[RMDB]
RNA sequence: GGGAACGACUCGAGUAGAGUCGAAAAGAGCCACAUACCUACCCAAGGUGAAGGCUCCUUCUCUCGCAAUGUGUAACUCAUGAUUCUCAUGACCCCUGGUUGGAGAGAUCCGGACUAGGAGCCAGGGAAAGCCGCUGCCGAUUCGUCGGCAGCGGAAUCUAUACAGUUAGUUCGCUAACUGUAUAGAAAAAGAAACAACAACAACAAC
Reactivity to DMS in 0.01 (KOAc 150mM, MgCl2 10mM, bicine 150mM(pH8.5), 24C), signal-to-noise 1, nucleotides 027 to 156: g000a060g000c000c070a080c090a230u010a040c000c000u000a140c120c100c170a170a120g010g010u000g010a140a260g000g020c000u000c020c010u000u000c020u010c000u010c040g040c070a160a070u000g010u000g000u010a110a090c070u000c040a080u000g010a190u000u010c040u000c010a130u010g030a080c020c000c010c020u000g010g040u000u000g020g010a090g000a300g010a240u000c020c010g000g020a050c020u000a040g010g000a040g020c000c000a040g010g010g000a050a040a130g010c000c010g080c020u000g010c000c000g000a120u010u020c270g040u000c000g000g000c000a010g010c000g000g000a020a000
Reactivity to 2A3 in 0.01 (KOAc 150mM, MgCl2 10mM, bicine 150mM(pH8.5), 24C), signal-to-noise 2, nucleotides 027 to 156: g030a010g010c020c000a020c040a150u180a030c030c000u070a120c060c000c060a070a040g040g000u050g040a070a070g000g000c010u010c000c000u060u000c000u000c040u040c030g040c160a090a110u110g060u080g030u180a090a070c020u030c070a030u040g040a190u270u050c110u030c080a030u050g030a090c000c000c000c010u010g020g010u020u090g110g010a070g030a030g000a090u020c020c030g090g070a090c070u100a080g070g020a020g000c020c010a020g000g010g000a060a050a000g030c000c000g000c000u010g000c050c030g020a030u060u100c200g060u010c000g090g080c010a000g000c000g000g000a000a000
About this RNA: Source: RMDB library M2RFPK, as collected in RNAgym. Chemical mapping of a 207-nucleotide RNA with DMS and 2A3. For DMS the reverse transcriptase was MarathonRT.